[RMDB]
RNA sequence: GGGAACGACUCGAGUAGAGUCGAAAACGUCGUGAACUAGCGACAAUGCAUUAGGUCCAUCGUUAUCUAACCGAAACAUCGUGACUAGUGUUAGAAUAGAACCAGGAGAGGGCGCUGGCAAACAAAGGCGGAGUGUAUUAUUCGUAGUACGCUCCGCAAAAGAAACAACAACAACAAC
Reactivity to 2A3 in 0.01 (KOAc 150mM, MgCl2 10mM, bicine 150mM(pH8.5), 24C), signal-to-noise 9, nucleotides 027 to 126: c050g010u010c010g010u020g060a140a060c050u030a060g020c000g020a010c020a010a060u090g000c020a030u020u070a040g050g060u020c020c000a040u030c090g030u030u050a110u060c020u020a020a060c020c020g040a020a020a020c050a050u100c060g080u090g060a030c040u020a040g010u010g020u070u050a020g030a050a050u090a050g030a030a020c020c010a010g010g020a060g010a030g010g010g000c000g000c010u000g010g000c010a030a040a010c040a020a070a000g100
Reactivity to DMS in 0.01 (KOAc 150mM, MgCl2 10mM, bicine 150mM(pH8.5), 24C), signal-to-noise 9, nucleotides 027 to 126: c150g010u010c040g020u010g010a110a110c110u020a150g000c010g010a050c050a090a090u030g010c050a050u000u020a070g000g010u010c020c030a080u020c100g020u010u000a090u010c030u000a070a070c140c100g010a100a060a050c070a060u020c130g020u010g010a060c050u010a040g010u020g010u010u010a040g000a060a090u020a080g000a070a110c030c050a070g000g000a090g000a080g000g000g000c040g010c020u000g000g000c060a060a070a060c130a050a100a070g000